RNA sequence: GGGAACGACUCGAGUAGAGUCGAAAAGAUAUGGAUCAAAGGGAGCACUAUAAUCACACUGAGUCGGAAACGACUUUGUGGUAGUGUCUUUGAUCCUAAGUCAAAGGCUUCUGUUCGCAGAAGCCAACACGAAAGUUAACUUCGGUUAACUUUCGUGAAAAGAAACAACAACAACAAC
Reactivity to DMS in 0.01 (KOAc 150mM, MgCl2 10mM, bicine 150mM(pH8.5), 24C), signal-to-noise 3, nucleotides 027 to 126: g010a020u000a230u010g000g000a010u000c010a000a040a000g020g000g050a300g020c010a000c010u000a290u020a110a090u010c080a220c000a010c280u010g000a000g020u010c000g000g000a060a020a140c000g010a010c010u000u000u010g010u000g000g020u000a020g010u000g020u000c000u000u000u000g000a010u000c000c000u000a000a090g010u000c020a140a130a140g010g010c000u000u000c000u000g000u000u000c200g020c000a030g000a000a000g010c000c000a020a070
Reactivity to 2A3 in 0.01 (KOAc 150mM, MgCl2 10mM, bicine 150mM(pH8.5), 24C), signal-to-noise 3, nucleotides 027 to 126: g020a020u040a030u070g000g010a010u000c030a020a020a000g100g120g080a300g190c020a000c020u090a090u080a300a100u090c030a000c010a020c120u020g020a010g000u000c000g000g010a000a030a020c000g000a000c000u000u010u010g010u000g010g050u030a030g010u020g300u060c020u020u000u000g000a000u000c000c000u000a000a000g000u000c030a110a060a170g000g000c010u000u000c000u020g090u060u130c300g000c140a000g000a010a000g000c020c000a000a000